[RMDB]
RNA sequence: GGGAACGACUCGAGUAGAGUCGAAAAUGUGGUGCCGUCGCGGCUGCGCCGUCCGGGCGCGGUGGUCCUGGAGAUCGACGACGAGGACCCGAUCUUCACGCACCUGGAGAGCGCGGCCCCGAUACGGGGCGUACUGACUGUUCGCAGUCAGUACGCCAAAAGAAACAACAACAACAAC
Reactivity to 2A3 in 0.01 (KOAc 150mM, MgCl2 10mM, bicine 150mM(pH8.5), 24C), signal-to-noise 2, nucleotides 027 to 126: u210g050u080g050g090u100g070c010c010g010u010c020g000c020g000g010c000u000g000c020g020c030c030g270u000c010c010g000g020g000c000g000c010g010g000u090g020g050u050c040c030u030g020g000a040g000a020u050c030g100a130c040g030a040c140g090a200g060g080a040c010c000c000g020a030u000c000u000u020c020a040c090g010c010a020c000c000u000g020g000a050g000a010g000c010g000c000g000g010c000c000c000c000g040a060u090a150c030g060g000
Reactivity to DMS in 0.01 (KOAc 150mM, MgCl2 10mM, bicine 150mM(pH8.5), 24C), signal-to-noise 3, nucleotides 027 to 126: u010g010u010g010g010u000g010c010c020g020u000c000g030c300g010g010c000u000g010c000g020c010c030g000u010c030c010g010g000g020c020g030c010g010g010u000g000g010u000c070c070u010g010g000a020g000a060u000c010g010a100c080g000a130c130g010a100g020g010a110c120c030c010g020a020u000c020u000u000c020a050c030g000c010a020c010c010u000g010g000a050g000a070g020c000g000c020g020g000c010c010c030c000g010a080u010a050c090g020g000
This 177-nucleotide RNA was probed chemically with 2A3 and DMS. Source: RMDB library OK2TRN, as collected in RNAgym. The reactions ran in a buffer of 150 mM KOAc, 10 mM MgCl2 and 150 mM bicine (pH 8.5), at 24 C. The 2A3 profile rests on 4,709 reads. For 2A3 the reverse transcriptase was SuperScript II with manganese.